[RMDB]
RNA sequence: GGGAACGACUCGAGUAGAGUCGAAAAGAUAUGGAUGGGAUGACUCUUUUGACGGCUACUAUUCGGAAACGAAUACUAGCCGAUAAGAGUAUCCCAUCCUAAGUCAAAACAGGCGUUCGCGCCUGAAGCGAUAAACCAAGUUCGCUUGGUUUAUCGCAAAAGAAACAACAACAACAAC
Reactivity to DMS in 0.01 (KOAc 150mM, MgCl2 10mM, bicine 150mM(pH8.5), 24C), signal-to-noise 1, nucleotides 027 to 126: g020a030u000a300u040g000g010a030u000g020g000g000a010u010g010a040c020u000c000u000u000u000u000g030a270c180g000g000c020u000a000c140u000a000u000u010c010g000g010a130a050a220c010g020a000a010u000a030c110u000a000g070c010c020g000a060u000a010a010g000a020g020u070a080u000c000c000c000a010u000c000c000u000a040a020g000u000c060a090a080a120a150c010a020g000g000c020g060u000u000c160g000c020g010c010c000u000g020a010a180
Reactivity to 2A3 in 0.01 (KOAc 150mM, MgCl2 10mM, bicine 150mM(pH8.5), 24C), signal-to-noise 1, nucleotides 027 to 126: g030a040u100a030u180g030g010a010u000g000g060g000a000u090g300a220c000u030c020u050u140u140u290g300a170c080g000g010c020u030a000c000u000a000u010u000c000g000g050a090a000a030c010g000a000a000u010a000c010u020a000g090c000c000g000a010u000a010a000g000a010g000u000a000u000c000c010c000a000u010c000c000u030a020a040g000u010c010a000a000a000a110c000a000g010g000c020g080u050u090c190g070c010g050c040c030u010g000a050a020
The record gives the reactivity of an RNA of 177 nucleotides to DMS and 2A3. For DMS the reverse transcriptase was MarathonRT. The 2A3 profile rests on 1,666 reads. Conditions: 150 mM KOAc, 10 mM MgCl2 and 150 mM bicine (pH 8.5), 24 C.